[RMDB]
RNA sequence: GGGAACGACUCGAGUAGAGUCGAAAAUGGGUGCCGACGCGCAACGUGUCACUGACCUUAUCGUGCGCAGCAUCGUACCUCGUGGGGUGGCUGUGGCACUCAGUGUGCUCGCCGUUGCGGGAGCUGACAUGCGGAGGGUAUUCGUACCCUCCGCAUGAAAAGAAACAACAACAACAAC
Reactivity to 2A3 in 0.01 (KOAc 150mM, MgCl2 10mM, bicine 150mM(pH8.5), 24C), signal-to-noise 3, nucleotides 027 to 126: u060g050g000g030u110g010c020c020g040a080c050g000c000g030c060a050a040c080g070u060g020u050c020a040c210u110g050a080c010c040u110u130a160u180c080g020u010g000c030g000c000a020g010c000a050u070c080g140u060a050c020c030u050c080g080u220g010g040g000g010u030g040g050c010u030g000u060g160g000c020a000c000u020c010a030g030u060g030u060g040c040u030c050g130c040c020g070u050u150g000c000g020g020g000a030g000c040u030g020a020
Reactivity to DMS in 0.01 (KOAc 150mM, MgCl2 10mM, bicine 150mM(pH8.5), 24C), signal-to-noise 4, nucleotides 027 to 126: u010g010g020g020u000g010c020c040g000a260c090g020c020g010c040a070a040c070g010u020g000u000c020a070c110u010g000a060c150c150u010u010a070u010c130g010u000g010c010g020c020a070g000c020a100u000c120g030u020a060c030c040u000c150g020u010g020g010g020g010u010g000g010c010u000g020u000g020g030c000a000c010u000c040a010g010u010g010u000g020c020u000c020g010c050c050g030u000u000g010c060g020g000g000a110g010c040u000g010a210
An RNA of 177 nucleotides, treated with 2A3 and DMS and read out base by base.
The DMS profile rests on 4,996 reads.
The RNA was probed in 150 mM KOAc, 10 mM MgCl2 and 150 mM bicine (pH 8.5) at 24 C.